[RMDB]
RNA sequence: GGGAACGACUCGAGUAGAGUCGAAAAAAGAUAUGGAAAGGAUCGAGCUCUCUUUCCCAACAGCAAGCUUCGGAAACGAAGCUUGACAUGGGAAAGGUGAGCUAAGACAGUCCUUUCCUAAGUCAAAGAUUAUGUCACAGUUCGCUGUGACAUAAUCAAAAGAAACAACAACAACAAC
Reactivity to 2A3 in 0.01 (KOAc 150mM, MgCl2 10mM, bicine 150mM(pH8.5), 24C), signal-to-noise 1, nucleotides 027 to 126: a000a000g090a030u080a040u170g000g010a010a010a000g010g000a010u130c030g070a030g000c010u010c000u000c000u020u000u010c030c000c000a160a130c060a150g080c000a000a000g010c000u000u010c000g000g010a010a050a030c020g000a010a010g000c010u010u000g010a010c000a060u130g000g000g000a020a000a000g020g050u130g010a000g000c000u010a040a020g060a000c020a000g030u010c000c000u000u000u000c000c000u020a120a030g050u020c060a130a090a000
Reactivity to DMS in 0.01 (KOAc 150mM, MgCl2 10mM, bicine 150mM(pH8.5), 24C), signal-to-noise 3, nucleotides 027 to 126: a130a010g010a020u020a300u000g000g010a010a030a000g000g000a020u010c030g000a050g020c010u000c000u000c000u000u000u000c000c000c000a050a110c300a260g010c000a010a010g000c000u010u010c010g000g000a080a090a200c000g030a010a010g000c010u010u000g020a030c050a210u000g000g000g010a000a000a020g010g020u020g000a010g020c010u000a020a060g000a160c300a130g000u000c000c010u000u000u000c000c000u000a040a020g000u010c020a090a090a190